[RMDB]
Annotation: Structure probing data (2A3) for a 207-nucleotide construct. Values cover nucleotides 27 to 156. It was measured as part of the RMDB library OK3TST.

RNA sequence: GGGAACGACUCGAGUAGAGUCGAAAAACACUGCUACCCCUGGUGAAAAACUGUGUGACCUUGAGCAAGUCGGUCUCGCUCAGUCUCUUUCCUCAGCUGGGGAUAAAAUUCCUACUUCACAGGACUGUAAAGAUUAAGCAAGGCAAGGGAUAUGAAACGUGCAAAGUUUUUUCGAAAACUUUGCACGAAAAGAAACAACAACAACAAC
Reactivity to 2A3 in 0.01 (KOAc 150mM, MgCl2 10mM, bicine 150mM(pH8.5), 24C), signal-to-noise 1, nucleotides 027 to 156: a000c010a010c030u070g020c020u030a090c000c030c000c110u040g040g000u040g030a110a050a050a060a050c020u000g020u010g040u020g100a030c010c000u040u050g020a000g020c070a070a020g060u060c080g020g000u030c020u000c020g000c000u000c010a000g050u030c010u000c000u080u060u020c020c010u040c030a010g020c090u040g000g000g000g020a000u090a020a150a000a010u050u000c020c000u010a060c020u030u030c020a020c020a110g000g010a070c060u060g030u080a120a090a030g060a030u060u180a030a030g030c020a020a020g020g000c000a010a020g030g000g000a020u030a100u190g120a190a030a030